[RMDB]
RNA sequence: GGGAACGACUCGAGUAGAGUCGAAAACUACACCAUGGUAGUGGAUCAAUCCAGCGAUGUGCCGGUCGUCACGGUCUCCAGCCCCAGCGACGGAGGAUUUGCCGGUGCAGGCCAUGUGGUGAGCGGCCUGCGUAACCCCGUUCGCGGGGUUACGCAGAAAAGAAACAACAACAACAAC
Reactivity to 2A3 in 0.01 (KOAc 150mM, MgCl2 10mM, bicine 150mM(pH8.5), 24C), signal-to-noise 1, nucleotides 027 to 126: c000u080a020c020a060c060c080a110u120g160g000u020a090g060u040g040g000a040u050c070a110a130u060c030c050a010g080c070g110a090u080g040u060g080c010c020g070g150u050c010g030u000c020a020c030g110g000u040c040u030c040c060a040g000c000c000c000c000a020g020c000g040a030c070g040g060a150g060g060a110u090u040u160g000c000c010g040g000u020g000c000a000g040g000c000c000a060u160g020u090g050g000u070g000a030g030c070g000g020c000
Reactivity to DMS in 0.01 (KOAc 150mM, MgCl2 10mM, bicine 150mM(pH8.5), 24C), signal-to-noise 2, nucleotides 027 to 126: c030u000a030c040a100c120c090a090u020g020g020u000a060g000u000g010g000a300u020c170a120a110u010c000c000a140g000c100g000a090u000g010u000g010c010c010g000g010u000c130g010u000c020a030c040g000g010u000c010u010c060c110a140g000c030c020c010c010a110g020c020g000a020c030g000g010a160g010g010a140u010u010u010g040c040c000g000g010u000g030c010a030g000g020c010c010a080u010g010u020g020g020u000g000a120g010c110g010g000c020